[RMDB]
RNA sequence: GGGAACGACUCGAGUAGAGUCGAAAAGCGCGUAGGUUCAGAUGAUGGGCCCGCAUCUGUACGAAAGACAGACGAAAGUCCAGCCUACGUGCAUGAGCACGCGGGCCCCGUGCUCUACAGCAAAAGACGCUAGUCACCCUUUCGAGGGUGACUAGCGAAAAGAAACAACAACAACAAC
Reactivity to 2A3 in 0.01 (KOAc 150mM, MgCl2 10mM, bicine 150mM(pH8.5), 24C), signal-to-noise 1, nucleotides 027 to 126: g000c010g000c000g010u000a000g000g010u070u070c070a000g000a080u010g020a020u110g120g010g010c000c000c000g010c000a000u000c000u000g130u060a060c040g160a180a000a070g050a000c020a020g000a000c060g130a190a010a000g000u000c010c010a000g000c000c000u000a010c000g040u000g050c000a000u070g000a000g040c000a000c000g000c040g010g000g030c030c020c000c010g000u000g000c000u000c000u040a040c010a100g040c060a010a110a000a000g070a010
Source information:
The data come from the RNA Mapping Database (RMDB), library OK1LIB. Chemical mapping of a 177-nucleotide RNA with 2A3. The RNA was probed in 150 mM KOAc, 10 mM MgCl2 and 150 mM bicine (pH 8.5) at 24 C. For 2A3 the reverse transcriptase was SuperScript II with manganese.